An RNA of 177 nucleotides, treated with 2A3 and read out base by base. For 2A3 the reverse transcriptase was SuperScript II with manganese. The reactions ran in a buffer of 150 mM KOAc, 10 mM MgCl2 and 150 mM bicine (pH 8.5), at 24 C.
[RMDB]
RNA sequence: GGGAACGACUCGAGUAGAGUCGAAAAUAAAACCAUCGAGCUCUAAUGAGUUCGAUGGAGCAUGAAUGUCUCCUGAGUAUGACAUUAUGCAAAUCAGGAGGUGUCGAGGAAAACUCGACGCCAAAAACCAUACCCACGCAUUCGUGCGUGGGUAUGGAAAAGAAACAACAACAACAAC
Reactivity to 2A3 in 0.01 (KOAc 150mM, MgCl2 10mM, bicine 150mM(pH8.5), 24C), signal-to-noise 3, nucleotides 027 to 126: u140a020a020a000a040c000c000a000u010c000g010a000g000c020u010c020u080a300a220u300g010a010g010u010u000c010g010a000u010g010g000a000g010c000a000u140g190a080a000u010g010u000c000u070c030c040u090g050a040g090u300a170u250g000a000c000a000u010u030a000u050g000c000a040a060a000u120c060a070g090g100a080g000g070u040g000u030c000g000a000g010g030a140a190a090a090c000u000c000g000a000c000g000c000c000a070a000a000a000a110
It was measured as part of the RMDB library OK1LIB. Reactivities are given for positions 27 through 126.